[RMDB]
Conditions: 150 mM KOAc, 10 mM MgCl2 and 150 mM bicine (pH 8.5), 24 C.
An RNA of 177 nucleotides, treated with DMS and read out base by base.
DMS adducts were read by reverse transcription with MarathonRT.
RNA sequence: GGGAACGACUCGAGUAGAGUCGAAAAGAUAUGGAUCUGAACUACGAAGCGAAGGGCGUUGAAAUCGGAAACGAUGGAGCCUGGAGGUUUCGCAGAUCCUAAGUCAAAAGCGUAGUUCGCUACGCAACUAUAAGUCCGAGUUCGCUCGGACUUAUAGAAAAGAAACAACAACAACAAC
Reactivity to DMS in 0.01 (KOAc 150mM, MgCl2 10mM, bicine 150mM(pH8.5), 24C), signal-to-noise 3, nucleotides 027 to 126: g000a040u010a300u010g000g000a010u000c010u000g000a080a090c110u000a230c030g000a010a050g010c010g010a300a220g010g020g000c020g010u000u000g010a080a130a040u000c010g020g000a110a090a140c000g000a000u000g000g000a060g030c000c000u000g010g000a300g020g000u000u000u000c000g020c000a010g000a010u020c000c010u000a030a070g010u020c030a060a110a080a060g030c000g000u000a010g000u000u010c210g000c020u000a000c000g000c010a110a130